[RMDB]
RNA sequence: GGGAACGACUCGAGUAGAGUCGAAAAGUGUCGCCCAUGAUGACACUCCCGAAAGCGGGACGUGACACUCUCGAAAGCGGGACGUGACACUCUCCCCCACCAAAACAAGGUGUACGUCCUUGUACACGUAAGGUACACAGUUCGCUGUGUACCUUACAAAAGAAACAACAACAACAAC
Reactivity to DMS in 0.01 (KOAc 150mM, MgCl2 10mM, bicine 150mM(pH8.5), 24C), signal-to-noise 3, nucleotides 027 to 126: g030u020g020u000c020g020c070c130c160a150u000g000a100u020g000a070c010a020c000u010c000c010c000g000a100a050a130g030c090g010g000g010a010c220g020u010g000a080c040a030c110u000c010u000c050g010a070a080a130g000c060g010g000g010a030c180g010u010g000a080c020a010c030u000c060u000c010c000c010c020c040a080c090c130a080a050a060a060c100a060a030g000g040u000g000u010a040c100g000u000c080c070u020u030g000u000a070c150a040c120
Reactivity to 2A3 in 0.01 (KOAc 150mM, MgCl2 10mM, bicine 150mM(pH8.5), 24C), signal-to-noise 4, nucleotides 027 to 126: g020u010g010u010c010g040c020c040c050a150u250g070a080u080g000a010c010a000c020u020c020c000c000g050a200a150a000g210c080g000g010g010a020c050g010u010g020a010c010a020c030u000c010u010c040g150a240a150a070g200c090g010g000g000a010c090g050u080g030a010c010a010c020u050c050u010c000c000c010c010c000a100c010c030a020a100a010a070c030a050a000g060g010u020g030u080a040c050g100u090c020c030u040u080g030u010a020c030a000c050